[RMDB]
RNA sequence: GGGAACGACUCGAGUAGAGUCGAAAACUCCUCUUCGGAGGAGAGAAACGCGUACUACGAGGGACAUGAGUGAUCCUCCCCACCCUAUUCCCAAAUAGGAAUAGGAGGGAUUAAACUCAACAGCCCUCGUAUCGCUUAUAUUCCGUUUCGACGGAAACUUCCUAACCACUUUCGAGUGGUUAGGAAGAAAAGAAACAACAACAACAAC
Reactivity to DMS in 0.01 (KOAc 150mM, MgCl2 10mM, bicine 150mM(pH8.5), 24C), signal-to-noise 2, nucleotides 027 to 156: c020u000c000c000u000c030u010u010c250g070g000a030g040g000a040g020a050g000a100a050a110c220g010c050g060u000a080c090u000a000c010g010a100g020g010g010a090c060a300u000g010a050g080u000g050a100u030c140c150u000c000c050c000c040a300c240c000c000u020a050u030u000c010c000c050a040a190a250u000a050g000g000a050a050u000a000g010g010a090g000g010g000a050u000u000a050a160a050c000u000c000a030a070c080a260g030c000c010c000u000c000g020u000a000u000c000g000c020u000u000a060u000a140u000u010c030c000g000u000u010u000c200g000a030c000g010g000a030a020a130
Reactivity to 2A3 in 0.01 (KOAc 150mM, MgCl2 10mM, bicine 150mM(pH8.5), 24C), signal-to-noise 2, nucleotides 027 to 156: c000u020c000c010u010c020u060u070c260g150g000a010g000g000a010g000a020g050a030a220a000c110g020c020g050u130a070c060u020a000c060g020a000g000g010g010a040c100a280u030g000a020g010u020g030a100u130c030c050u010c000c030c020c000a230c010c010c000u000a000u000u020c020c010c030a140a300a190u260a160g000g000a000a000u000a000g010g000a030g020g000g000a010u020u080a080a110a000c000u010c000a010a070c030a100g030c000c000c000u000c000g000u000a000u010c000g000c000u010u000a080u030a020u040u080c030c000g000u100u050u170c300g100a030c030g030g000a030a050a040